[RMDB]
RNA sequence: GGGAACGACUCGAGUAGAGUCGAAAAGAUGCAUCUUUCGAGAUGCAUCAAAAAGCGUACUACCUCGAGGGUCGGGAGUUAAGUCCCAAAUAGGACUUAAAGCUCCGGACCUACCCACCGAGGUAUCGCAAAAAAGACCAAUCUUCGGAUUGGUCAAGUUAAAACGACAGUUCGCUGUCGUUUUAACAAAAGAAACAACAACAACAAC
Reactivity to DMS in 0.01 (KOAc 150mM, MgCl2 10mM, bicine 150mM(pH8.5), 24C), signal-to-noise 2, nucleotides 027 to 156: g020a050u000g000c000a010u010c000u000u080u010c220g030a060g040a030u000g000c000a000u020c010a050a050a120a060a140g000c030g010u000a090c080u000a030c010c000u000c010g000a120g030g000g030u000c010g020g000g020a030g000u020u010a040a030g010u000c000c000c030a050a130a190u010a020g000g010a010c020u010u000a020a110a100g000c000u000c020c000g050g020a020c000c000u000a010c040c040c020a300c200c000g000a020g010g010u000a020u010c010g010c010a000a030a050a150a130a140g010a010c010c000a020a010u000c000u000u010c300g000g050a030u000u010g020g000u000c000a010a000
Reactivity to 2A3 in 0.01 (KOAc 150mM, MgCl2 10mM, bicine 150mM(pH8.5), 24C), signal-to-noise 2, nucleotides 027 to 156: g000a000u000g000c000a000u040c040u080u170u280c300g050a000g000a040u010g000c000a000u000c010a020a000a030a030a000g060c040g010u060a110c040u000a000c010c000u010c000g000a030g030g030g010u000c100g130g000g000a000g000u050u020a040a000g010u030c000c020c060a090a150a180u200a060g010g010a000c000u020u010a120a240a070g080c010u010c010c020g040g000a010c000c000u040a050c030c040c020a050c110c010g010a010g000g030u000a000u070c000g000c000a010a000a000a140a050a000g000a000c000c000a000a010u010c010u000u080c220g070g000a000u000u000g000g000u010c000a000a000